[RMDB]
RNA sequence: GGGAACGACUCGAGUAGAGUCGAAAAAGGACAGACCGGGAGCUGCCCAGUUUCUGCUUCCAGGCGCACCUGCUAAGAGUAGUCUUGCCAGUGAAGCGACUGCUGGGGUACAGCAGCACAGCACAGGUGUUAUAGGCAAUUUCGAUUGCCUAUAACAAAAAGAAACAACAACAACAAC
Reactivity to DMS in 0.01 (KOAc 150mM, MgCl2 10mM, bicine 150mM(pH8.5), 24C), signal-to-noise 7, nucleotides 027 to 126: a050g010g010a080c060a040g010a090c050c050g010g010g010a140g020c020u000g000c010c020c010a080g010u000u010u010c030u010g020c030u000u000c020c020a260g010g010c040g020c160a090c230c010u000g010c050u010a080a120g000a120g030u000a050g000u000c060u010u010g020c040c020a090g020u020g010a030a030g010c020g000a050c150u000g000c010u000g000g010g010g010u000a100c040a040g000c020a050g000c040a060c050a090g010c040a070c100a100g000g010
Reactivity to 2A3 in 0.01 (KOAc 150mM, MgCl2 10mM, bicine 150mM(pH8.5), 24C), signal-to-noise 3, nucleotides 027 to 126: a000g070g010a030c010a020g040a030c020c020g060g030g040a020g000c020u050g020c010c000c000a000g000u040u050u030c080u200g000c000u030u000c000c000a030g020g030c020g010c040a040c010c020u020g020c010u110a240a050g080a020g170u040a010g020u050c090u140u130g010c020c000a100g010u120g260a020a000g000c040g020a040c050u070g000c000u000g000g000g040g040u120a040c020a020g010c000a000g000c010a020c020a040g040c040a030c020a090g070g070